[RMDB]
Structure probing data (DMS and 2A3) for a 177-nucleotide construct. Source: RMDB library RFM100, as collected in RNAgym.
RNA sequence: GGGAACGACUCGAGUAGAGUCGAAAACCGCGCCGCUGCCGCCAAGGCCAGGCCGGAAGCCGGCCAGGCCCCGCGCGAAGAAGAGGAAGAAGAGAAGCCGUCGCGCUGAGGACAGCGCAGGUUUCGCUUUCGCGUUCCUAUUCGUAGGAACGCGAAAAAAAGAAACAACAACAACAAC
Reactivity to DMS in 0.01 (KOAc 150mM, MgCl2 10mM, bicine 150mM(pH8.5), 24C), signal-to-noise 1, nucleotides 027 to 126: c010c000g040c060g000c070c040g000c060u050g020c010c000g000c040c190a130a250g060g000c000c020a040g000g000c000c010g000g000a190a140g000c050c000g000g000c000c000a050g000g020c010c000c040c020g000c040g000c160g000a050a150g000a040a080g010a090g000g010a100a110g040a100a040g000a140g000a060a010g020c010c000g040u050c210g000c040g030c000u050g000a190g010g040a240c000a060g040c020g000c000a100g000g000u000u010u000c000g000c090
Reactivity to 2A3 in 0.01 (KOAc 150mM, MgCl2 10mM, bicine 150mM(pH8.5), 24C), signal-to-noise 2, nucleotides 027 to 126: c030c000g000c000g000c030c000g030c020u090g020c020c030g060c010c010a040a040g000g000c000c040a000g010g030c000c000g080g010a150a010g230c090c000g020g000c000c000a050g000g000c000c000c000c020g050c060g000c040g010a070a010g040a090a010g040a040g180g040a040a050g050a050a090g050a060g030a010a010g000c020c000g050u280c070g000c000g030c000u000g030a190g150g070a110c000a000g000c010g020c010a000g000g010u000u000u000c000g030c010